[RMDB]
RNA sequence: GGGAACGACUCGAGUAGAGUCGAAAACUGCUUCGAAAGAAGAAGCAUUCUUACAUAUGAAAUUCUAUGAAUCUGAUUCAGUUUAUGAACUUCCAACUGAAGUUGAAAUUGUUAAAAGAAUUUAUCGGCAAACAACAUAAUUCGUUAUGUUGUUUGCAAAAGAAACAACAACAACAAC
Reactivity to DMS in 0.01 (KOAc 150mM, MgCl2 10mM, bicine 150mM(pH8.5), 24C), signal-to-noise 3, nucleotides 027 to 126: c130u010g000c010u020u000c000g010a130a180a170g000a090a130g010a030a010g000c020a090u010u000c030u010u000a120c150a130u010a050u000g000a070a040a050u000u010c030u000a100u000g010a090a080u000c100u000g020a170u000u010c010a020g010u000u000u000a060u000g000a030a030c040u000u000c020c190a120a080c240u010g010a000a040g010u000u000g000a040a040a030u000u000g000u000u000a040a050a160a070g000a030a020u000u000u000a040u010c150g020
Reactivity to 2A3 in 0.01 (KOAc 150mM, MgCl2 10mM, bicine 150mM(pH8.5), 24C), signal-to-noise 2, nucleotides 027 to 126: c010u050g030c030u000u010c030g270a300a300a280g120a060a060g000a020a000g070c000a010u050u000c020u080u050a070c030a070u280a070u250g080a080a110a070u100u040c030u060a060u110g070a070a110u060c060u090g050a070u080u000c010a010g050u060u000u070a140u150g010a020a050c020u060u000c050c000a060a070c140u170g000a020a000g040u060u010g000a060a080a050u060u080g030u090u120a040a110a040a020g010a000a000u040u110u020a160u210c020g040
The record gives the reactivity of an RNA of 177 nucleotides to DMS and 2A3. For 2A3, 1,287 sequencing reads were counted. 2A3 adducts were read by reverse transcription with SuperScript II with manganese. DMS adducts were read by reverse transcription with MarathonRT. Reactivities are given for positions 27 through 126.